This 177-nucleotide RNA was probed chemically with 2A3 and DMS. Reactivities are given for positions 27 through 126. The data come from the RNA Mapping Database (RMDB), library M2PK50.
RNA sequence: GGGAACGACUCGAGUAGAGUCGAAAACAUAAACGCUUCGGCGUUUAUGAAAUAAAAUCAGCGGUAAGCUCGCGUAAUAUAUUACCGCUGAACGCGAGCUUAAAACGGGACAGUUCGCUGUCCCGAAGUAAAGGUACGUGUUCGCACGUACCUUUACAAAAGAAACAACAACAACAAC
Reactivity to 2A3 in 0.01 (KOAc 150mM, MgCl2 10mM, bicine 150mM(pH8.5), 24C), signal-to-noise 1, nucleotides 027 to 126: c010a000u000a010a000a000c010g010c000u050u070c180g180g010c000g000u000u000u000a000u020g020a010a010a000u160a010a070a000a080u130c080a000g040c000g100g070u070a030a010g000c000u020c020g000c000g040u010a160a000u090a030u090a100u120u200a060c000c060g020c060u010g030a000a000c000g000c020g000a020g000c000u010u050a060a040a000a040c030g020g000g000a000c000a030g000u050u070c170g060c110u000g010u000c000c030c000g000a010a000
Reactivity to DMS in 0.01 (KOAc 150mM, MgCl2 10mM, bicine 150mM(pH8.5), 24C), signal-to-noise 1, nucleotides 027 to 126: c000a020u000a010a000a010c000g010c010u010u030c230g050g010c010g000u000u000u030a000u010g000a040a130a130u010a030a090a040a080u000c030a020g010c090g000g040u010a040a040g000c000u000c000g020c010g020u000a050a080u010a100u000a080u010u000a140c030c030g000c030u000g010a070a010c030g010c010g000a030g000c000u000u000a010a040a040a080c000g000g020g010a010c000a030g010u010u010c200g040c020u010g000u000c020c010c000g000a000a030